[RMDB]
Record summary: Conditions: 150 mM KOAc, 10 mM MgCl2 and 150 mM bicine (pH 8.5), 24 C. The record gives the reactivity of an RNA of 177 nucleotides to 2A3 and DMS. For DMS the reverse transcriptase was MarathonRT. It was measured as part of the RMDB library TTRDEL. For 2A3 the reverse transcriptase was SuperScript II with manganese. For 2A3, 2,029 sequencing reads were counted. Reactivities are given for positions 27 through 126.
RNA sequence: GGGAACGACUCGAGUAGAGUCGAAAAGAUAUGGAUGCAGAACGCGUCUAACUUGCGAUGAAAUCGGAAACGAUGGAGCAACUUAGACUAAGCUGCAUCCUAAGUCAAAGGUGGCUUCGGCCACCAACCAAUUGGAUUGCUUCGGCAAUCCAAUUGGAAAAGAAACAACAACAACAAC
Reactivity to 2A3 in 0.01 (KOAc 150mM, MgCl2 10mM, bicine 150mM(pH8.5), 24C), signal-to-noise 2, nucleotides 027 to 126: g030a020u100a040u150g030g000a000u000g030c000a000g050a270a080c040g070c060g110u010c000u000a000a000c010u000u000g050c000g300a300u060g000a010a020a050u020c010g010g030a070a110a020c010g000a010u010g010g000a020g050c000a000a000c000u010u010a000g010a010c000u010a100a020g020c000u000g000c010a000u000c000c000u000a000a010g050u040c060a050a090a050g000g000u000g020g000c000u070u100c290g170g040c000c030a010c000c000a000a000
Reactivity to DMS in 0.01 (KOAc 150mM, MgCl2 10mM, bicine 150mM(pH8.5), 24C), signal-to-noise 1, nucleotides 027 to 126: g000a020u000a300u000g000g010a010u000g010c010a000g020a060a080c090g050c200g000u020c010u000a000a020c100u000u000g010c000g000a190u020g000a080a080a020u000c010g000g010a070a120a180c000g070a000u000g020g030a060g000c010a020a000c090u000u000a010g000a010c000u000a180a170g000c000u000g000c000a000u010c000c000u000a020a060g020u000c000a050a100a080g000g020u000g010g000c000u000u020c300g050g000c000c000a020c000c040a020a130